[RMDB]
RNA sequence: GGGAACGACUCGAGUAGAGUCGAAAAGAAAGAAUGCUUGCUGCGUGGCGAUGGGCUGAACGUCAAGAACGGCGUAACCAUGAGGUAGCUGUAGAUGUACUAGGAAGAACCAAUAACGCUAUGCUCUGGGUCAACAUGUUCUCUGGGGACUUUAAGGGUUAAGCUCCAAAUUCGUUUGGAGCUUAACAAAAGAAACAACAACAACAAC
Reactivity to 2A3 in 0.01 (KOAc 150mM, MgCl2 10mM, bicine 150mM(pH8.5), 24C), signal-to-noise 3, nucleotides 027 to 156: g100a000a040a000g130a060a080u140g000c030u090u070g010c030u030g000c000g010u040g040g000c050g070a060u080g000g000g030c020u020g060a080a020c030g010u010c090a110a040g070a120a040c050g020g000c030g020u030a030a030c020c010a060u140g050a030g010g010u030a000g000c030u060g030u080a030g000a130u080g040u070a030c050u060a060g010g040a060a060g000a070a050c010c010a000a070u070a160a030c040g000c030u040a030u090g030c000u000c060u080g020g020g030u010c010a030a030c020a110u110g030u050u020c020u000c030u050g000g000g010g020a010c000u030u100u120a110a040g080g030
Reactivity to DMS in 0.01 (KOAc 150mM, MgCl2 10mM, bicine 150mM(pH8.5), 24C), signal-to-noise 1, nucleotides 027 to 156: g020a150a080a120g030a090a070u000g010c080u000u000g040c010u000g040c140g010u010g000g000c040g010a100u010g020g030g010c010u010g020a060a090c020g000u000c040a060a170g010a070a140c070g030g010c010g000u010a150a150c100c060a080u000g000a080g050g090u000a030g000c040u000g000u000a140g010a070u000g030u000a130c030u000a080g010g010a140a070g000a090a170c120c020a050a140u000a060a100c080g000c010u000a080u000g000c020u000c000u000g050g010g020u030c050a040a030c030a070u020g030u000u000c020u010c030u000g030g010g030g010a070c090u000u000u000a070a070g000g010

Structure probing data (2A3 and DMS) for a 207-nucleotide construct. It was measured as part of the RMDB library OK3TST. For 2A3 the reverse transcriptase was SuperScript II with manganese.